[RMDB]
RNA sequence: GGGAACGACUCGAGUAGAGUCGAAAAGUAGGUACAUCGGAUUAUUAUUACGGUAGAUACGGAUCCCCACACCAUUCGCCAUUCCGGCGGCACCAUAAUUAUCUGAUACCAAAUGGCUAAUGCCGCCCACCAUGAGACUUUUCGAAGUCUCAUGGUGAAAAGAAACAACAACAACAAC
Reactivity to 2A3 in 0.01 (KOAc 150mM, MgCl2 10mM, bicine 150mM(pH8.5), 24C), signal-to-noise 1, nucleotides 027 to 126: g090u130a050g080g060u050a030c060a090u010c020g030g010a030u050u040a040u160u030a060u000u150a260c060g010g020u040a070g060a150u060a050c050g020g050a090u160c010c000c010c000a000c020a000c000c010a050u080u120c030g000c030c000a050u150u070c050c000g020g020c010g000g000c010a010c020c000a000u020a190a010u050u150a050u050c030u040g030a050u030a080c000c040a000a130a110u060g040g000c030u100a120a000u180g020c000c000g000c030c000
Reactivity to DMS in 0.01 (KOAc 150mM, MgCl2 10mM, bicine 150mM(pH8.5), 24C), signal-to-noise 2, nucleotides 027 to 126: g010u000a070g010g000u000a080c170a070u000c040g010g000a030u000u020a040u010u010a080u010u020a110c080g010g010u000a040g000a100u010a030c100g000g010a090u010c050c010c010c040a100c150a060c090c060a110u000u000c050g000c020c040a160u000u010c160c180g000g010c000g010g050c140a040c040c040a020u020a040a040u010u010a040u010c030u010g000a040u000a060c020c060a030a070a090u010g010g000c180u020a020a100u020g010c000c010g020c040c020
Overview: This 177-nucleotide RNA was probed chemically with 2A3 and DMS. Reactivities are given for positions 27 through 126. For 2A3, 1,380 sequencing reads were counted. The RNA was probed in 150 mM KOAc, 10 mM MgCl2 and 150 mM bicine (pH 8.5) at 24 C.